[RMDB]
RNA sequence: GGGAACGACUCGAGUAGAGUCGAAAACGAUCACAUCCCUCAUUUCAUCUUUCGGGUCUUCAGCUUGCCUCGCCUGAAUCACUGCACUCGUGUGGUGAGCGGGGGCUGCAUGGCUACAAACGGAAAUUACUCCAAUAUGAUUCGUCAUAUUGGAGUAAAAAGAAACAACAACAACAAC
Reactivity to DMS in 0.01 (KOAc 150mM, MgCl2 10mM, bicine 150mM(pH8.5), 24C), signal-to-noise 6, nucleotides 027 to 126: c150g000a080u010c100a060c090a110u010c020c010c020u020c090a110u010u010u000c050a070u000c040u000u020u000c060g010g000g010u000c010u000u000c040a040g000c010u010u010g010c010c020u000c010g010c030c160u000g000a130a160u000c010a020c000u010g010c030a020c050u030c300g020u020g020u000g000g010u000g000a020g010c050g010g010g010g000g030c020u000g000c070a040u020g000g010c000u000a080c200a050a040a060c030g000g000a110a050a040u000
Reactivity to 2A3 in 0.01 (KOAc 150mM, MgCl2 10mM, bicine 150mM(pH8.5), 24C), signal-to-noise 9, nucleotides 027 to 126: c040g050a080u150c050a030c030a170u050c010c020c020u040c050a080u040u150u070c030a060u020c070u010u100u070c030g050g000g010u010c000u040u040c020a020g020c020u110u200g070c010c000u030c010g050c010c030u100g100a090a050u040c000a010c010u010g010c010a010c020u090c150g100u010g010u020g030g010u010g010a010g000c010g010g020g010g010g000c000u000g000c010a050u040g020g000c010u080a110c090a050a080a020c010g050g010a010a030a010u020

Conditions: 150 mM KOAc, 10 mM MgCl2 and 150 mM bicine (pH 8.5), 24 C.
Structure probing data (DMS and 2A3) for a 177-nucleotide construct.
Values cover nucleotides 27 to 126.
For 2A3 the reverse transcriptase was SuperScript II with manganese.